[RMDB]
RNA sequence: GGGAACGACUCGAGUAGAGUCGAAAAAGAAUUCGCUGGGAAGGACGAGCUCGAUGAGCUAUGAGAACGCUCCUGAAGCGCGCACGGGAGCGACAUAGCGAGAGCUCGGUACUUCCUGUGCUGAAGCGCGCACGGCAACCGAAAGGUGCGAUUACAAGAUUAUCUAUCUCUUCGGAGAUAGAUAAUCAAAAGAAACAACAACAACAAC
Reactivity to 2A3 in 0.01 (KOAc 150mM, MgCl2 10mM, bicine 150mM(pH8.5), 24C), signal-to-noise 3, nucleotides 027 to 156: a000g070a010a100u060u000c000g000c010u000g000g000g000a000a010g010g010a010c000g000a000g000c000u000c010g300a300u050g000a010g000c000u000a000u020g010a030g020a300a120c000g000c010u000c000c000u020g040a240a040g000c010g000c000g000c000a000c000g000g000g000a000g000c000g000a010c000a000u000a000g000c000g000a020g000a000g040c000u000c000g000g000u050a000c000u000u000c000c000u000g000u000g000c000u010g030a210a070g000c000g000c010g000c000a020c000g010g010c000a000a000c020c000g030a040a050a030g000g000u000g000c000g000a000u020u050a050c050a120a070
Reactivity to DMS in 0.01 (KOAc 150mM, MgCl2 10mM, bicine 150mM(pH8.5), 24C), signal-to-noise 1, nucleotides 027 to 156: a080g010a210a150u010u010c020g080c000u110g030g010g020a100a040g030g010a200c070g000a020g080c000u080c000g000a120u000g030a180g000c020u010a020u080g000a110g020a100a220c010g000c000u010c000c010u000g030a040a040g020c050g100c030g000c030a300c020g000g000g040a020g000c000g040a020c030a000u000a010g010c010g010a060g030a040g060c010u010c000g070g050u000a070c020u000u010c030c000u000g000u000g000c000u000g000a010a060g000c010g020c030g000c010a300c040g000g000c000a080a090c000c020g000a140a070a180g000g020u000g010c000g020a090u000u000a120c140a110a130
Chemical mapping of a 207-nucleotide RNA with 2A3 and DMS.
The reactions ran in a buffer of 150 mM KOAc, 10 mM MgCl2 and 150 mM bicine (pH 8.5), at 24 C.
The DMS profile rests on 2,582 reads.
The 2A3 profile rests on 4,766 reads.
Source: RMDB library RNAMAK, as collected in RNAgym.